[RMDB]
RNA sequence: GGGAACGACUCGAGUAGAGUCGAAAAUGGGGUAAAGACUGCGUACACCCAGUCGAGGAGAGUUGGUACUGAGGGCUACUUAUAUGUAUCUCCUCGAGCGCGUCAGUAUGAGUAGCCCUAAACGCGAGACUAUCAGUGCAUUCGUGCACUGAUAGUCAAAAGAAACAACAACAACAAC
Reactivity to DMS in 0.01 (KOAc 150mM, MgCl2 10mM, bicine 150mM(pH8.5), 24C), signal-to-noise 2, nucleotides 027 to 126: u070g010g020g000g050u030a060a050a060g000a020c060u050g020c000g020u010a110c100a170c000c020c030a180g030u000c000g000a030g000g000a010g000a060g020u000u000g000g010u040a060c170u000g030a040g020g010g030c000u000a020c000u000u000a000u010a030u010g020u020a210u000c000u000c010c000u000c000g000a000g010c010g070c010g040u010c000a140g020u040a030u010g030a000g000u000a030g000c000c020c030u000a010a080a040c120g000c130g030a300
Reactivity to 2A3 in 0.01 (KOAc 150mM, MgCl2 10mM, bicine 150mM(pH8.5), 24C), signal-to-noise 1, nucleotides 027 to 126: u060g000g000g090g020u100a000a000a140g060a000c030u130g040c080g000u020a000c020a110c020c000c000a000g010u010c000g000a000g000g010a000g030a020g020u150u270g060g090u180a180c110u170g070a020g010g000g000c000u030a000c020u000u000a040u010a040u250g200u070a070u010c010u030c000c000u030c000g000a000g000c000g000c000g050u020c080a050g060u010a030u040g010a020g000u000a000g000c000c010c010u030a020a020a000c030g000c060g040a020

The data come from the RNA Mapping Database (RMDB), library OK1LIB. An RNA of 177 nucleotides, treated with DMS and 2A3 and read out base by base. The 2A3 profile rests on 1,074 reads. For DMS the reverse transcriptase was MarathonRT.